Structure probing data (2A3 and DMS) for a 177-nucleotide construct.
[RMDB]
RNA sequence: GGGAACGACUCGAGUAGAGUCGAAAACGCGGGAUUUACAGAGACGGCGCAGAAGCGUCUCUGAUCUGCGCCACCGCGGAGCAGAACGAGCUGCCACUCGAAUAGUAUGACUUCGGUCAUGCGAAAAGGGAAGGACGGACUUCGGUCCGUCUUUCCCAAAAGAAACAACAACAACAAC
Reactivity to 2A3 in 0.01 (KOAc 150mM, MgCl2 10mM, bicine 150mM(pH8.5), 24C), signal-to-noise 6, nucleotides 027 to 126: c010g010c020g010g030g080a100u070u130u240a120c050a030g060a010g040a070c080g060g080c040g020c110a030g050a160a030g240c010g110u080c050u000c030u070g010a010u000c000u010g000c020g000c030c000a010c000c020g000c010g000g010a000g000c010a010g000a080a020c030g020a010g020c020u030g030c020c000a030c010u010c000g030a060a020u040a010g000u000a010u000g000a000c000u020u010c190g070g000u000c000a000u000g000c000g010a030a010a030a020
Reactivity to DMS in 0.01 (KOAc 150mM, MgCl2 10mM, bicine 150mM(pH8.5), 24C), signal-to-noise 4, nucleotides 027 to 126: c030g020c030g000g010g020a090u010u030u050a160c180a070g000a110g010a070c150g010g000c010g020c110a030g000a060a150g010c040g000u000c070u010c010u000g000a070u010c030u000g000c010g010c010c010a180c000c010g000c010g000g000a100g010c020a030g010a070a130c110g000a050g000c030u010g000c050c040a080c030u010c030g000a110a100u040a100g000u000a000u000g000a010c000u000u030c120g010g000u000c000a010u000g000c020g010a020a060a110a100
It was measured as part of the RMDB library OK1LIB.